[RMDB]
RNA sequence: GGGAACGACUCGAGUAGAGUCGAAAACGCAAGAGCAUACGGAAGUCUGACAGUGUCCGGCCUAACGACGGACGCUGACGCGAAAGCGUGGUCUAGCGAACCAAUUAGGCUGCUUGAUGCGGCCAAUAUGAACCGUCACGUUCGCGUGACGGUUCAUAAAAGAAACAACAACAACAAC
Reactivity to 2A3 in 0.01 (KOAc 150mM, MgCl2 10mM, bicine 150mM(pH8.5), 24C), signal-to-noise 2, nucleotides 027 to 126: c030g000c010a050a030g010a010g060c080a030u020a120c110g080g080a030a000g180u050c080u100g060a060c020a000g000u000g010u000c000c000g000g100c050c030u130a090a000c030g120a000c020g040g020a000c000g000c000u000g000a000c000g000c020g040a090a050a050g050c030g000u010g040g060u020c040u040a000g010c000g010a000a050c000c000a050a030u090u010a070g000g010c000u000g010c000u050u160g050a130u210g090c040g030g000c000c000a000a000u040